[RMDB]
RNA sequence: GGGAACGACUCGAGUAGAGUCGAAAACCUGGCUCGAAAUCGUCGACGCAUCGACGACGGUCCUGCCAUGAGACCGUAACGAGGACAUGUCGCCUCGAAUGGCGUCGGGGAGCCGGCCGCUUACCCCAAAACGACCGCAGCUUCGGCUGCGGUCGAACUUCAGAAUCAAGUUCGCUUGAUUCUGAAGAAAAGAAACAACAACAACAAC
Reactivity to 2A3 in 0.01 (KOAc 150mM, MgCl2 10mM, bicine 150mM(pH8.5), 24C), signal-to-noise 2, nucleotides 027 to 156: c000c020u030g040g000c040u060c140g060a120a200a240u100c150g140u010c010g060a020c030g040c130a060u070c040g050a030c020g010a000c010g010g000u010c010c010u060g080c040c000a110u140g060a070g010a050c030c030g060u130a060a010c030g010a010g000g000a010c050a060u220g080u170c070g020c020c010u020c020g040a030a040u040g100g000c010g000u040c060g000g000g000g000a000g020c020c040g020g020c020c000g010c050u040u120a150c000c010c000c000a020a080a050a050c020g030a010c000c000g000c000a000g010c050u160u100c300g120g000c050u000g000c010g000g000u000c000g000a000a000